[RMDB]
RNA sequence: GGGAACGACUCGAGUAGAGUCGAAAAGAUAUGGAGCAUCUACAGGGAACAACAGCUCGGAAACGAGACAUGUUCUAGUAGAGUGCUCCUAAGUCAAAAGGCGAAAGGCGUUCGCGCCUUUCGCCAACAUGAUUGUGUUCUUCGGAACACAAUCAUGAAAAGAAACAACAACAACAAC
Reactivity to DMS in 0.01 (KOAc 150mM, MgCl2 10mM, bicine 150mM(pH8.5), 24C), signal-to-noise 2, nucleotides 027 to 126: g020a060u000a300u020g000g020a020g010c000a070u000c000u000a000c000a120g010g000g000a010a000c000a070a100c230a110g010c000u000c000g000g000a100a090a190c000g000a010g000a020c110a110u010g000u000u000c000u000a060g000u000a020g040a030g000u000g010c000u000c000c000u000a010a030g000u000c080a080a060a080a120g000g040c000g000a000a020a000g010g020c000g000u000u010c280g020c000g000c010c000u000u000u000c010g040c010c000a010a030
Reactivity to 2A3 in 0.01 (KOAc 150mM, MgCl2 10mM, bicine 150mM(pH8.5), 24C), signal-to-noise 1, nucleotides 027 to 126: g050a000u070a050u180g010g010a000g000c020a000u000c000u020a000c050a090g300g050g000a000a020c000a020a010c020a110g000c000u010c010g040g000a080a110a030c020g010a010g060a030c020a140u100g020u000u000c010u030a010g000u000a000g020a020g020u030g020c010u000c000c000u000a020a010g020u000c010a010a030a100a160g010g040c000g000a000a000a000g000g000c030g040u120u100c240g040c010g030c130c010u030u010u000c030g000c000c010a010a000